[RMDB]
RNA sequence: GGGAACGACUCGAGUAGAGUCGAAAAGUCAAGAUGUGUAGGAUAGGUGGGAGGCUUUGAAGUGAGGACGCCAGUCUGCAUGGAGCCGACCUUGAAAUACCACCCUUUAAUGGAAAAACAAAGUGAACAAUAAAGCCCCUUUCGAGGGGCUUUAUUGAAAAGAAACAACAACAACAAC
Reactivity to DMS in 0.01 (KOAc 150mM, MgCl2 10mM, bicine 150mM(pH8.5), 24C), signal-to-noise 1, nucleotides 027 to 126: g030u020c020a050a180g000a010u010g010u000g010u000a040g000g000a050u000a030g000g010u020g010g000g000a160g020g040c010u000u000u000g030a060a120g020u000g020a080g000g000a020c050g010c100c210a050g010u000c040u010g010c000a030u000g030g000a010g030c000c010g010a150c270c060u010u010g000a040a020a080u000a090c010c020a050c030c000c020u010u000u010a080a100u000g010g000a030a020a050a140a090c100a060a070a100g010u000g000a060a180
This 177-nucleotide RNA was probed chemically with DMS. Conditions: 150 mM KOAc, 10 mM MgCl2 and 150 mM bicine (pH 8.5), 24 C.